[RMDB]
RNA sequence: GGGAACGACUCGAGUAGAGUCGAAAAGCAUACUGGCGGUCUUGAGGGAUCUAGGGGCAGACAGAACAGUCGGUGGAGCGGUGAAAUGCGUAGAGAUCGACUGGAAUGCCGAUGGCGAAGGCGGUCUUGGAUAUUCGAGAUUCGUCUCGAAUAUCCAAAAAGAAACAACAACAACAAC
Reactivity to 2A3 in 0.01 (KOAc 150mM, MgCl2 10mM, bicine 150mM(pH8.5), 24C), signal-to-noise 3, nucleotides 027 to 126: g040c020a050u070a130c040u060g030g000c040g000g040u040c010u050u090g080a090g020g030g010a070u030c050u120a010g080g030g000g000c020a020g030a030c040a010g130a070a020c000a000g040u000c000g000g020u000g030g000a030g020c010g020g030u110g080a140a040a040u180g000c040g040u130a010g020a010g030a050u020c000g030a050c000u040g080g010a030a060u100g020c000c040g150a080u100g020g000c030g020a060a010g040g000c030g000g020u000c010u000
Reactivity to DMS in 0.01 (KOAc 150mM, MgCl2 10mM, bicine 150mM(pH8.5), 24C), signal-to-noise 2, nucleotides 027 to 126: g010c040a080u010a110c030u010g020g000c070g000g050u000c020u040u000g000a060g010g010g020a080u020c060u020a090g020g000g020g030c050a080g000a090c090a040g000a180a160c050a060g040u000c020g040g040u010g010g000a060g000c030g030g000u020g000a070a220a100u050g000c070g000u020a150g000a250g000a000u010c000g010a010c010u020g000g000a070a070u050g000c010c000g000a060u000g000g000c080g000a140a060g000g000c040g000g000u000c080u030